Source: RMDB library OK1LIB, as collected in RNAgym.
The record gives the reactivity of an RNA of 177 nucleotides to 2A3 and DMS.
For DMS the reverse transcriptase was MarathonRT.
Values cover nucleotides 27 to 126.

RNA sequence: GGGAACGACUCGAGUAGAGUCGAAAAUUGCAGUCGAUGAUCAGCCUUGUCUAUAACGCCGGCGUGGCCGCCGGAAGCGAACAGCGAGCCGCUGAAAUUCGUGAGGCUCUGGGAUAUUCAGGAACUGAGUGACUGAUGUUUUCGAACAUCAGUCACUAAAAGAAACAACAACAACAAC
Reactivity to 2A3 in 0.01 (KOAc 150mM, MgCl2 10mM, bicine 150mM(pH8.5), 24C), signal-to-noise 4, nucleotides 027 to 126: u090u050g050c010a000g040u060c030g050a070u090g030a050u050c020a040g070c000c000u070u100g050u140c030u080a130u050a210a030c070g000c000c020g020g020c040g030u070g150g030c120c070g000c000c000g000g020a000a020g010c020g030a080a040c000a020g010c000g060a030g090c080c040g040c070u010g010a070a060a030u050u040c020g030u060g050a050g000g000c000u010c030u030g030g040g000a020u070a070u220u070c070a060g060g080a080a060c070u060g050
Reactivity to DMS in 0.01 (KOAc 150mM, MgCl2 10mM, bicine 150mM(pH8.5), 24C), signal-to-noise 2, nucleotides 027 to 126: u000u020g030c020a070g000u020c040g000a070u050g000a210u030c050a060g010c010c030u000u000g040u050c040u040a010u020a220a060c100g000c030c000g000g010c050g020u000g020g000c270c000g020c040c000g000g010a080a030g000c090g010a060a060c130a020g000c060g000a080g000c120c050g030c000u040g010a020a110a090u020u000c050g000u010g000a120g030g000c020u050c040u000g000g010g000a020u030a070u000u000c090a030g010g020a040a080c070u040g000